The data come from the RNA Mapping Database (RMDB), library M2PK50. This 177-nucleotide RNA was probed chemically with 2A3 and DMS. For DMS, 21,183 sequencing reads were counted. The reactions ran in a buffer of 150 mM KOAc, 10 mM MgCl2 and 150 mM bicine (pH 8.5), at 24 C.
RNA sequence: GGGAACGACUCGAGUAGAGUCGAAAAGCCUUACGAUUCGUCGUAAGGCAUACAAAGUUAUGGCACUAUGAGCCCGCAGCGUUGGUGCUCCCACGCGGUGCAAUACGACGGAUUUCGAUCCGUCGAAAGUAUCCAUCAAAUUCGUUUGAUGGAUACUAAAAGAAACAACAACAACAAC
Reactivity to 2A3 in 0.01 (KOAc 150mM, MgCl2 10mM, bicine 150mM(pH8.5), 24C), signal-to-noise 9, nucleotides 027 to 126: g000c000c000u000u010a000c000g010a020u030u070c200g040u000c000g000u130a000a010g000g000c000a000u030a010c040a000a140a010g040u120u110a100u190g060g000c020a010c060u070a090u290g070a040g030c000c010c020g010c030a080g020c020g060u130u150g030g020u140g060c050u100c020c000c000a030c020g010c030g010g030u040g010c010a040a060u130a120c010g000a000c000g000g000a010u050u040u090c140g070a020u000c000c000g000u000c000g000a000a000
Reactivity to DMS in 0.01 (KOAc 150mM, MgCl2 10mM, bicine 150mM(pH8.5), 24C), signal-to-noise 9, nucleotides 027 to 126: g000c000c000u010u000a010c010g000a020u000u010c190g020u000c000g020u000a010a010g000g010c000a000u000a030c130a090a090a110g010u010u000a070u010g010g010c010a050c040u000a120u010g010a110g000c010c010c040g020c110a100g000c070g010u000u010g010g010u010g010c180u000c060c030c020a060c060g000c030g000g000u000g010c050a090a070u010a130c030g010a010c000g000g000a020u000u000u010c160g010a030u000c000c000g000u000c000g000a010a030